[RMDB]
The record gives the reactivity of an RNA of 177 nucleotides to DMS.
RNA sequence: GGGAACGACUCGAGUAGAGUCGAAAACUGGGGGCUGCAGUCCCCUCCUCAGGGCAGGCUCUGAUCGGGGGCAUAGGUGUACCACCCAGGGAUGUCCAUUCUCCACCCGUGGGCUGAGCCACAGCAGCUGCCCAGACAGUUUCGACUGUCUGGGCAGAAAAGAAACAACAACAACAAC
Reactivity to DMS in 0.01 (KOAc 150mM, MgCl2 10mM, bicine 150mM(pH8.5), 24C), signal-to-noise 1, nucleotides 027 to 126: c030u020g020g010g020g000g010c010u000g010c040a180g000u000c000c020c000c030u000c020c030u000c030a010g010g000g030c080a260g000g020c000u010c000u000g010a030u010c200g010g000g030g020g040c200a060u000a060g000g010u010g040u010a050c150c050a130c010c000c000a040g000g030g000a090u000g000u010c100c060a080u000u000c050u010c080c070a060c010c020c000g000u000g030g000g000c170u060g010a190g010c080c020a060c060a160g020c000a030g000
Notes:
The DMS profile rests on 1,031 reads. The RNA was probed in 150 mM KOAc, 10 mM MgCl2 and 150 mM bicine (pH 8.5) at 24 C. Reactivities are given for positions 27 through 126.